[RMDB]
Structure probing data (DMS and 2A3) for a 177-nucleotide construct. The data come from the RNA Mapping Database (RMDB), library TTRDES. The RNA was probed in 150 mM KOAc, 10 mM MgCl2 and 150 mM bicine (pH 8.5) at 24 C. Values are in units of 0.01, from 0 to 300, in steps of 10. 2A3 adducts were read by reverse transcription with SuperScript II with manganese.
RNA sequence: GGGAACGACUCGAGUAGAGUCGAAAAGAUAUGGAGAUCUGAGAGGCGACGAUCUGGUCUGUCGGAAACGACAGCCAGGGAGCCUUCCAGAUCUCCUAAGUCAAAGGCGUCUGUUCGCAGACGCCAACCAAUACAAUCGCUUCGGCGAUUGUAUUGGAAAAGAAACAACAACAACAAC
Reactivity to DMS in 0.01 (KOAc 150mM, MgCl2 10mM, bicine 150mM(pH8.5), 24C), signal-to-noise 2, nucleotides 027 to 126: g000a050u010a300u020g000g000a000g010a010u000c010u010g000a060g020a020g010g020c000g000a040c280g000a020u010c010u020g000g030u050c010u000g020u000c000g000g000a150a100a270c000g040a000c010a000g020c020c010a000g010g000g000a060g020c000c000u020u000c020c000a010g000a000u010c000u000c000c000u000a010a090g000u000c020a100a140a180g000g000c000g010u000c000u000g010u000u060c300g040c020a030g000a020c000g010c000c040a030a020
Reactivity to 2A3 in 0.01 (KOAc 150mM, MgCl2 10mM, bicine 150mM(pH8.5), 24C), signal-to-noise 2, nucleotides 027 to 126: g030a000u070a050u210g000g010a010g000a010u010c000u040g030a020g030a020g300g010c010g040a300c010g010a110u000c010u040g000g120u270c070u020g000u000c000g000g090a150a090a000c010g010a010c000a010g010c000c000a000g000g000g000a000g000c010c040u040u020c000c000a020g000a000u020c000u000c000c000u010a000a000g000u010c000a050a060a150g010g000c020g000u010c020u030g090u100u160c300g020c200a000g000a000c010g000c000c000a010a010